Structure probing data (2A3 and DMS) for a 177-nucleotide construct. Conditions: 150 mM KOAc, 10 mM MgCl2 and 150 mM bicine (pH 8.5), 24 C. For DMS, 5,089 sequencing reads were counted.
RNA sequence: GGGAACGACUCGAGUAGAGUCGAAAAGAUAUGGAGGUCGUCGAUAAGCCUGACGUCGGAAACGACGUAGGCUUUUGACGACGCUACUCCUAAGUCAAACGAACUUCAACUUCGGUUGAAGUUCGAAGAUCUCCUAUUUCUUCGGAAAUAGGAGAUCAAAAGAAACAACAACAACAAC
Reactivity to 2A3 in 0.01 (KOAc 150mM, MgCl2 10mM, bicine 150mM(pH8.5), 24C), signal-to-noise 2, nucleotides 027 to 126: g030a020u110a030u190g000g020a000g000g030u020c000g000u000c020g020a060u040a300a010g010c020c010u100g200a070c000g000u010c000g040g010a060a050a050c010g010a000c010g010u000a000g010g000c000u000u010u010u010g000a010c010g000a010c000g000c000u130a120c010u040c010c000u040a170a030g050u020c060a080a040a080c020g000a000a000c010u000u010c000a000a000c000u080u090c230g140g000u010u000g010a010a000g000u000u000c010g000a000a010
Reactivity to DMS in 0.01 (KOAc 150mM, MgCl2 10mM, bicine 150mM(pH8.5), 24C), signal-to-noise 5, nucleotides 027 to 126: g000a040u000a300u000g000g000a020g010g000u000c000g010u000c000g010a030u010a030a010g000c000c000u000g020a020c000g010u000c000g000g010a110a100a200c000g010a010c000g030u000a020g000g010c000u000u000u000u000g000a020c000g010a000c010g000c180u010a300c020u000c020c020u010a080a160g020u000c050a100a140a270c000g010a010a010c000u000u000c000a000a010c000u000u010c190g020g000u000u000g000a020a000g000u000u010c000g000a040a070